[RMDB]
RNA sequence: GGGAACGACUCGAGUAGAGUCGAAAAGUUCAGCGUUACCAAGAUUAAUUGUUGAUGCAUCUAAACCAAACACCAAGGCAUACACAACACCAACAAUUGCAGCAAUGGUGACAGUGCCAAUUAAAAAAGUUUAUAUUCUGUUCGCAGAAUAUAAACUAAAAGAAACAACAACAACAAC
Reactivity to DMS in 0.01 (KOAc 150mM, MgCl2 10mM, bicine 150mM(pH8.5), 24C), signal-to-noise 5, nucleotides 027 to 126: g020u010u000c060a110g000c050g020u010u000a020c040c020a080a120g010a150u020u020a050a090u020u010g000u020u010g030a030u010g010c070a080u000c080u000a050a100a180c040c060a090a080a120c150a060c170c100a090a070g020g000c040a060u000a110c110a050c180a090a130c020a010c060c020a050a070c060a030a070u010u020g010c140a110g000c080a060a100u010g000g020u010g000a040c100a070g010u020g000c040c030a050a090u030u020a000a050a050a050a040
Reactivity to 2A3 in 0.01 (KOAc 150mM, MgCl2 10mM, bicine 150mM(pH8.5), 24C), signal-to-noise 9, nucleotides 027 to 126: g040u070u090c040a010g020c040g040u030u030a050c010c010a050a030g030a120u150u200a120a090u090u100g030u040u050g030a040u040g020c020a050u030c070u190a090a070a070c030c010a090a080a020c090a020c040c050a070a030g030g000c020a020u100a080c060a020c020a120a100c010a040c040c000a040a200c020a140a190u190u170g030c060a050g000c010a060a100u060g000g020u030g040a030c030a030g010u020g020c010c020a040a040u170u300a050a080a050a040a010

Structure probing data (DMS and 2A3) for a 177-nucleotide construct. The data come from the RNA Mapping Database (RMDB), library OK1LIB. For 2A3, 11,400 sequencing reads were counted. The DMS profile rests on 8,509 reads. Values cover nucleotides 27 to 126.